[RMDB]
RNA sequence: GGGAACGACUCGAGUAGAGUCGAAAAUACAAACACGAUGGACAAGAUGUAGGUGGGCUUGGCUUCACAUUAAACAGGUAAUGAGAUACCAGGUGCUUCAGAGUCGCCUACACGCUCAUGCCAAUUCUGUUAGGUACAGAUUCGUCUGUACCUAACAAAAAGAAACAACAACAACAAC
Reactivity to 2A3 in 0.01 (KOAc 150mM, MgCl2 10mM, bicine 150mM(pH8.5), 24C), signal-to-noise 4, nucleotides 027 to 126: u140a020c030a020a090a000c070a010c150g100a070u090g020g020a020c010a030a040g020a030u040g000u020a010g000g030u030g100g050g000c030u020u040g030g000c010u050u080c040a040c000a090u120u210a070a130a080c080a050g080g000u050a090a040u130g090a080g000a100u040a010c010c010a010g080g010u040g020c040u050u110c020a060g020a040g160u070c000g020c010c020u010a000c000a000c040g010c010u020c010a050u160g000c010c000a000a030u110u040c030
Reactivity to DMS in 0.01 (KOAc 150mM, MgCl2 10mM, bicine 150mM(pH8.5), 24C), signal-to-noise 5, nucleotides 027 to 126: u010a120c150a090a100a130c130a100c140g000a130u010g000g020a060c040a160a020g010a110u000g020u000a010g010g030u010g030g000g000c010u000u010g000g010c050u010u000c020a030c060a060u000u010a050a080a130c210a080g000g010u000a020a030u010g020a110g010a100u000a070c060c040a030g010g000u000g010c100u020u000c140a120g000a060g020u000c010g020c010c000u000a020c010a020c140g000c020u000c050a060u010g000c010c040a050a110u010u010c090
An RNA of 177 nucleotides, treated with 2A3 and DMS and read out base by base. Reactivities are given for positions 27 through 126. For 2A3 the reverse transcriptase was SuperScript II with manganese. Conditions: 150 mM KOAc, 10 mM MgCl2 and 150 mM bicine (pH 8.5), 24 C.